Background
An RNA of 207 nucleotides, treated with DMS and 2A3 and read out base by base. Source: RMDB library OK3TST, as collected in RNAgym.
RNA sequence: GGGAACGACUCGAGUAGAGUCGAAAAAAGCGAGUUCGUCUGUGGCGGGCAAAUGCUUAUACUUUACAAUGUGACGGCUGCGGAAAUAGCGGGUGCACCGACAGGCCGUAAAACCGGCCCAGAUGAGAAAAUUGAUGGCGAAGGCCACAGCUACAGAUCUCAUGCUAUAAUUCGUUAUAGCAUGAGAAAAAGAAACAACAACAACAAC
Reactivity to DMS in 0.01 (KOAc 150mM, MgCl2 10mM, bicine 150mM(pH8.5), 24C), signal-to-noise 2, nucleotides 027 to 156: a070a040g050c020g040a170g020u010u010c010g000u000c040u000g000u020g040g040c000g010g030g060c070a060a020a130u030g000c050u030u000a150u000a060c050u010u000u000a130c110a100a140u000g000u000g020a120c130g030g020c000u000g010c050g020g000a080a090a120u010a080g040c000g000g020g040u000g010c080a130c030c050g020a050c050a140g010g000c010c000g000u000a040a010a110a070c130c000g040g020c000c020c030a030g000a140u000g030a120g000a030a040a100a120u000u000g020a200u010g000g010c050g000a180a100g030g000c000c020a000c020a060g020c020u000a090c040a070g010a170
Reactivity to 2A3 in 0.01 (KOAc 150mM, MgCl2 10mM, bicine 150mM(pH8.5), 24C), signal-to-noise 2, nucleotides 027 to 156: a000a000g130c100g000a090g040u030u020c010g000u000c060u040g080u080g030g000c050g000g030g000c050a140a010a050u090g070c030u120u090a100u070a090c020u080u140u020a100c100a080a100u190g040u070g080a040c060g010g010c010u010g000c000g000g090a070a150a160u130a050g030c020g000g110g000u060g020c010a010c040c000g150a040c040a020g080g000c000c000g010u050a020a040a030a110c030c010g060g000c040c000c000a070g010a090u070g000a020g170a100a050a040a060u100u180g060a110u040g010g020c050g050a100a020g110g000c010c000a000c000a020g000c010u030a030c000a080g080a120